[RMDB]
RNA sequence: GGGAACGACUCGAGUAGAGUCGAAAAGAAACGAACUCGAAAGAGUUCGAACGACGGGAAGCGAUGAGCAGCGAAAGAAACGCUGCACGCCGCAUCGCACGGCGAACCGUCGAAUAAAGAAGAAAGACACUAUAUAGCUGUUCGCAGCUAUAUAGUGAAAAGAAACAACAACAACAAC
Reactivity to DMS in 0.01 (KOAc 150mM, MgCl2 10mM, bicine 150mM(pH8.5), 24C), signal-to-noise 6, nucleotides 027 to 126: g010a130a090a140c000g020a010a010c000u000c000g000a170a120a130g000a000g000u000u000c000g000a090a110c010g010a010c010g000g000g010a140a100g000c020g000a020u000g010a120g010c000a000g000c000g000a120a120a120g030a140a130a080c010g000c010u000g000c000a030c050g020c090c080g000c020a120u000c020g020c040a130c150g010g000c040g000a100a170c000c000g000u000c010g030a090a050u040a050a090a060g020a090a120g010a090a120a110g010a230
Reactivity to 2A3 in 0.01 (KOAc 150mM, MgCl2 10mM, bicine 150mM(pH8.5), 24C), signal-to-noise 9, nucleotides 027 to 126: g120a000a100a000c010g000a010a000c000u000c010g030a040a050a050g000a010g000u010u000c000g000a040a000c010g000a000c000g000g010g050a120a050g040c040g060a090u070g080a040g010c000a000g010c010g070a120a150a170g210a040a140a010c000g000c000u000g000c000a010c020g040c010c020g030c020a060u080c040g020c060a050c050g130g000c030g010a030a040c000c000g000u000c010g000a020a030u150a050a080a030g150a050a020g060a030a110a010g070a010